[RMDB]
RNA sequence: GGGAACGACUCGAGUAGAGUCGAAAAGAUAUGGAGAUAUGGCGAGAGGGAAACUGCAUCGGAAACGAUGCAGGAACCCUCCCCACCUCGCAUAUCUCCUAAGUCAAAAUCUCGGUUCGCCGAGAAACGUUUAUAGACAGUUCGCUGUCUAUAAACGAAAAGAAACAACAACAACAAC
Reactivity to DMS in 0.01 (KOAc 150mM, MgCl2 10mM, bicine 150mM(pH8.5), 24C), signal-to-noise 5, nucleotides 027 to 126: g010a020u010a300u000g000g000a000g000a020u000a010u010g030g020c030g010a040g010a070g020g020g000a080a090a190c000u000g000c000a010u010c010g000g000a140a090a140c000g030a000u000g000c000a000g000g000a020a130c060c170c110u000c030c010c000c040a110c200c010u000c010g010c000a010u000a000u000c000u000c000c000u020a020a080g000u010c040a090a070a140a100u000c000u000c000g010g020u000u000c210g000c000c000g000a010g000a030a050a100
Reactivity to 2A3 in 0.01 (KOAc 150mM, MgCl2 10mM, bicine 150mM(pH8.5), 24C), signal-to-noise 4, nucleotides 027 to 126: g030a020u070a040u150g010g010a000g000a010u020a030u080g300g120c050g000a060g010a030g050g040g000a180a300a020c010u000g000c000a000u000c010g000g000a050a050a040c020g000a010u010g010c000a000g000g000a000a010c020c000c000u020c000c000c000c000a130c010c000u000c000g010c010a000u000a000u020c000u000c010c000u040a100a000g040u020c020a030a060a130a300u030c010u010c010g030g000u060u090c240g010c060c000g010a020g000a010a010a000